Chemical mapping of a 177-nucleotide RNA with 2A3 and DMS. The DMS profile rests on 1,108 reads. DMS adducts were read by reverse transcription with MarathonRT.

RNA sequence: GGGAACGACUCGAGUAGAGUCGAAAAUUGUGGUUCCAGUCCAAGAAACGUCCAGCAACUUUGUUGGUUGUAUAGUCGAAGGUGCUUGAGUCAUUGGCAUGUGAGACUAAUAUACCUGCAUGCUAGUCACCAUGAAAUACUUCGGUAUUUCAUGGUGAAAAGAAACAACAACAACAAC
Reactivity to 2A3 in 0.01 (KOAc 150mM, MgCl2 10mM, bicine 150mM(pH8.5), 24C), signal-to-noise 2, nucleotides 027 to 126: u060u050g060u030g070g000u050u030c050c010a010g050u040c020c010a050a040g060a090a100a000c070g050u000c000c000a000g000c010a040a090c110u110u150u130g040u030u030g030g000u050u100g020u050a130u050a090g020u010c000g010a030a030g100g030u030g060c010u040u040g030a010g050u020c010a100u030u120g020g000c030a010u050g150u030g300a060g010a000c020u020a130a000u130a000u030a080c020c010u030g020c010a010u020g040c000u020a020g050u050
Reactivity to DMS in 0.01 (KOAc 150mM, MgCl2 10mM, bicine 150mM(pH8.5), 24C), signal-to-noise 2, nucleotides 027 to 126: u000u000g060u000g020g030u000u000c020c070a130g000u000c040c010a070a130g010a050a130a060c080g000u000c030c040a040g000c040a040a160c120u000u020u020g020u000u000g010g020u000u000g010u010a100u000a110g000u000c040g000a080a050g010g020u000g010c010u020u000g010a090g000u000c080a090u000u010g000g000c010a020u000g000u000g000a210g030a050c080u030a090a090u010a140u000a050c010c020u020g010c000a040u000g020c020u010a080g010u000
Source information
It was measured as part of the RMDB library RFMREP.